[RMDB]
RNA sequence: GGGAACGACUCGAGUAGAGUCGAAAAAGACAUACGUUCGCGUAUGUCUGACGGGCACCUGACCCUAACGAAAUGCUCUAUGACAGGACACACUGAUUGUGAUACCUCGAGAUUUCGAUCUCGAGAAGUACAUACCCCGGUUCGCCGGGGUAUGUACAAAAGAAACAACAACAACAAC
Reactivity to 2A3 in 0.01 (KOAc 150mM, MgCl2 10mM, bicine 150mM(pH8.5), 24C), signal-to-noise 2, nucleotides 027 to 126: a000g000a000c000a000u000a010c000g040u030u040c300g020c000g080u020a000u000g000u000c000u000g000a010c020g000g000g050c070a050c060c050u060g180a290c000c000c000u030a090a040c070g070a120a030a040u080g060c020u020c020u090a120u140g120a070c020a040g070g000a030c020a010c000a000c060u070g160a200u290u070g030u000g060a080u090a120c010c010u000c010g030a010g000a000u090u070u130c190g030a020u010c000u000c010g000a010g000a010a030
Reactivity to DMS in 0.01 (KOAc 150mM, MgCl2 10mM, bicine 150mM(pH8.5), 24C), signal-to-noise 3, nucleotides 027 to 126: a000g010a000c000a000u000a010c000g040u000u020c210g060c030g030u000a000u000g000u000c000u000g020a050c180g020g000g020c030a060c070c080u000g000a150c020c010c010u000a060a110c100g000a060a110a130u010g000c050u000c030u000a070u000g010a200c090a010g010g000a100c070a060c050a060c130u020g010a110u020u010g010u010g000a110u010a070c110c000u000c000g000a010g000a020u000u000u010c240g010a030u000c000u010c010g000a020g000a030a080